[RMDB]
RNA sequence: GGGAACGACUCGAGUAGAGUCGAAAAAUAUAAACUUUGCAGUUAAGAUUGCUCAUUCUUCGCCAAGUGUGGUGGCACCAGCCUGUAGUCUCAGCUACUCAGGAGGCUGAGGUGGGAGGGUUGCUUGAACCCAGGAGGUCAAGACUGUAGUGAGCCACCUUAUUCAUCGAUUCGUCGAUGAAUAAGGAAAAGAAACAACAACAACAAC
Reactivity to 2A3 in 0.01 (KOAc 150mM, MgCl2 10mM, bicine 150mM(pH8.5), 24C), signal-to-noise 4, nucleotides 027 to 156: a010u140a010u070a080a120a060c070u090u120u130g100c080a040g020u050u130a100a040g020a140u070u120g020c010u020c020a060u130u000c030u040u040c050g020c020c010a070a120g050u030g020u080g090g030u010g030g000c030a040c010c010a030g000c000c020u090g080u240a120g040u030c030u000c020a020g000c000u030a070c040u120c170a130g090g090a060g030g030c000u010g010a000g000g040u100g020g020g010a040g020g010g040u080u150g010c000u040u050g120a030a020c000c000c000a010g010g030a030g000g030u040c030a040a010g010a020c040u070g040u110a030g050u030g010a000g030c020c010a020
Reactivity to DMS in 0.01 (KOAc 150mM, MgCl2 10mM, bicine 150mM(pH8.5), 24C), signal-to-noise 1, nucleotides 027 to 156: a080u030a080u020a050a070a080c050u000u000u000g060c080a180g000u000u000a120a130g010a150u010u010g020c020u000c060a210u020u010c020u010u000c090g020c000c040a060a300g010u020g050u020g040g050u020g020g000c050a030c060c030a060g000c000c000u000g000u000a180g000u000c040u000c070a110g020c010u000a070c080u000c120a130g010g020a300g040g000c000u010g010a010g010g000u000g000g000g000a130g050g010g020u010u000g010c030u000u020g020a100a050c030c000c020a270g010g020a300g010g000u000c030a040a150g000a030c080u000g000u000a150g000u000g000a110g030c020c050a110
The record gives the reactivity of an RNA of 207 nucleotides to 2A3 and DMS. It was measured as part of the RMDB library OK3TST. DMS adducts were read by reverse transcription with MarathonRT. Conditions: 150 mM KOAc, 10 mM MgCl2 and 150 mM bicine (pH 8.5), 24 C. For 2A3 the reverse transcriptase was SuperScript II with manganese.